[RMDB]
RNA sequence: GGGAACGACUCGAGUAGAGUCGAAAAUAAACUUCAGUGAUAUAGAGCCUUUCAUUGUAACUAUUAAAAGGACUCAGCUCUUGUGGCAUGUUUAUUAAAGAGUCAGACAUAUUACUGUACUUUGUAGCGAUAUCCUAUACUUCGGUAUAGGAUAUCGAAAAGAAACAACAACAACAAC
Reactivity to DMS in 0.01 (KOAc 150mM, MgCl2 10mM, bicine 150mM(pH8.5), 24C), signal-to-noise 5, nucleotides 027 to 126: u010a050a090a080c110u000u000c020a010g010u000g000a010u000a030u000a200g000a030g020c010c000u000u000u000c050a010u000u000g010u000a130a160c230u030a020u000u000a020a010a020a010g010g000a120c010u000c010a210g000c000u000c000u000u000g010u010g020g020c160a110u010g010u010u010u010a080u020u010a090a030a020g010a010g000u000c070a070g010a140c180a030u000a020u000u000a010c000u000g010u010a070c140u010u000u010g020u010a120g020
Reactivity to 2A3 in 0.01 (KOAc 150mM, MgCl2 10mM, bicine 150mM(pH8.5), 24C), signal-to-noise 3, nucleotides 027 to 126: u030a000a030a010c010u050u020c020a010g010u000g030a000u020a020u030a080g010a010g020c000c000u010u020u050c020a050u050u030g040u070a060a080c060u090a050u110u080a070a030a010a020g010g050a230c000u000c020a000g000c000u000c000u040u050g040u050g140g000c060a100u100g100u120u180u070a120u020u110a130a050a000g030a010g020u060c060a020g030a060c080a050u030a010u020u030a020c000u010g040u050a050c020u040u170u110g150u140a060g070

Chemical mapping of a 177-nucleotide RNA with DMS and 2A3. For DMS the reverse transcriptase was MarathonRT. The reactions ran in a buffer of 150 mM KOAc, 10 mM MgCl2 and 150 mM bicine (pH 8.5), at 24 C. Reactivities are rounded to 0.1 and cut off at 0 and 3. For 2A3, 2,797 sequencing reads were counted.